The record gives the reactivity of an RNA of 207 nucleotides to DMS and 2A3. The DMS profile rests on 8,706 reads.
RNA sequence: GGGAACGACUCGAGUAGAGUCGAAAAGUGUACUUGGUGACUCAGAGACUGGCGUGUACAGACACCUCACUAAGAGGGAGAUCAACACAGUCCCCAACUAGGCUCAACCAUCACAUUAAGGAAGGACAGCUGCACCUUAUGCUGGACCAACACUAGAAAAAUGGUAUUAUUUCGAUAAUACCAUUUUAAAAGAAACAACAACAACAAC
Reactivity to DMS in 0.01 (KOAc 150mM, MgCl2 10mM, bicine 150mM(pH8.5), 24C), signal-to-noise 4, nucleotides 027 to 156: g040u000g020u000a040c050u000u010g010g020u000g000a080c040u010c100a130g000a120g010a030c030u010g030g010c110g010u000g020u000a070c080a140g010a100c060a120c020c010u000c010a090c100u010a150a240g010a030g000g000g000a110g000a150u000c020a070a070c030a040c010a110g010u010c010c010c010c030a060a110c090u000a040g010g030c030u000c060a110a090c010c020a070u000c040a100c040a110u000u010a090a110g010g020a130a110g030g000a160c040a060g010c030u000g010c080a100c090c040u000u000a090u000g020c000u000g010g000a080c020c020a050a100c080a080c050u010a090g000a070
Reactivity to 2A3 in 0.01 (KOAc 150mM, MgCl2 10mM, bicine 150mM(pH8.5), 24C), signal-to-noise 5, nucleotides 027 to 156: g050u030g020u040a050c040u050u060g030g010u040g060a030c010u030c140a030g060a010g020a130c030u020g020g020c090g050u050g020u050a030c050a010g010a010c010a030c010c000u000c010a060c100u200a160a090g000a010g030g030g010a160g020a170u050c010a010a020c020a000c000a040g040u050c010c010c000c000a020a050c040u080a030g030g000c020u030c050a030a050c060c020a040u080c030a020c020a080u130u150a060a010g070g020a080a050g010g010a030c000a030g020c010u060g010c040a090c080c020u040u060a060u150g020c010u030g010g040a050c010c000a030a020c020a030c060u060a050g130a060